[RMDB]
RNA sequence: GGGAACGACUCGAGUAGAGUCGAAAAGAGAUUAGGUUUGACAACUAUUCAGUGGUAAUAUUGGCGCCAAGUGAACUGAUUACUGAGGUGGUGUAUCACAUAAAGGACAAGGUUAAGAAGGUGUAUAUCCUUAUCUUACUUUCGAGUAAGAUAAGGAAAAAGAAACAACAACAACAAC
Reactivity to 2A3 in 0.01 (KOAc 150mM, MgCl2 10mM, bicine 150mM(pH8.5), 24C), signal-to-noise 8, nucleotides 027 to 126: g090a000g020a040u060u110a080g070g110u080u050u110g100a080c030a060a040c060u080a090u100u100c020a010g050u050g080g010u060a020a090u070a240u160u150g070g020c020g000c040c020a070a020g080u050g080a050a050c040u030g070a100u080u090a050c020u060g040a050g080g020u030g020g050u040g020u040a050u100c000a020c010a090u170a080a100a020g010g000a010c030a040a040g040g000u050u070a130a020g040a040a010g090g020u040g020u020a050u030a010
Reactivity to DMS in 0.01 (KOAc 150mM, MgCl2 10mM, bicine 150mM(pH8.5), 24C), signal-to-noise 8, nucleotides 027 to 126: g010a090g010a050u010u010a050g000g010u010u010u000g030a090c130a090a100c080u010a050u010u000c030a090g000u020g000g020u010a070a060u020a110u020u010g010g010c050g010c030c060a080a070g000u010g000a080a090c120u010g000a110u010u010a060c060u010g000a080g020g020u010g000g020u020g010u000a040u020c060a050c100a080u040a070a070a080g000g000a060c070a040a070g010g010u000u020a050a070g000a090a050g010g010u010g020u020a060u010a100